[RMDB]
RNA sequence: GGGAACGACUCGAGUAGAGUCGAAAAGGAGCUAAUACUGACUGGACAUCCAACAUGCUGUCAUGCUGUAGAUGUUGAUGUUGGCACUUAUAGCCUCUUUCAGAAAAGAACAGGAUUUUUUGAUGCAGUUAACCAUUCAGAAACUGUUCUCGAUGAAACUACUUUCUGUCUUCGGACAGAAAGUAGUAAAAGAAACAACAACAACAAC
Reactivity to 2A3 in 0.01 (KOAc 150mM, MgCl2 10mM, bicine 150mM(pH8.5), 24C), signal-to-noise 5, nucleotides 027 to 156: g030g000a030g000c010u050a040a060u070a200c030u060g090a030c040u080g080g020a000c010a010u030c070c000a070a030c030a090u180g060c040u150g120u300c070a140u240g000c040u050g020u060a020g010a070u030g010u030u030g020a100u070g010u010u000g010g020c050a030c070u110u100a090u090a260g030c010c010u040c010u010u040u020c040a030g080a070a060a020a000g020a000a000c000a020g030g060a090u040u000u020u030u050u140g010a000u020g010c050a060g080u130u120a080a110c070c010a040u060u110c020a030g040a020a030a020c010u000g000u010u000c010u010c020g050a060u090g040a090a060
Reactivity to DMS in 0.01 (KOAc 150mM, MgCl2 10mM, bicine 150mM(pH8.5), 24C), signal-to-noise 2, nucleotides 027 to 156: g050g000a060g010c010u020a010a180u000a050c020u000g000a040c060u020g000g030a020c010a030u000c010c010a020a010c040a050u020g040c060u000g020u000c060a070u010g020c000u000g000u000a080g010a030u000g020u000u010g010a140u030g010u000u010g000g010c000a010c100u000u000a140u010a090g000c000c010u010c040u010u000u000c040a090g010a130a190a080a000g030a020a030c000a030g000g000a090u000u000u000u000u000u000g000a040u010g020c040a180g030u000u010a090a110c090c040a110u000u000c070a010g010a040a040a100c000u000g000u000u000c020u000c010g000a190u000g000a080a110

The data come from the RNA Mapping Database (RMDB), library OK3TST.
An RNA of 207 nucleotides, treated with 2A3 and DMS and read out base by base.
For 2A3, 2,592 sequencing reads were counted.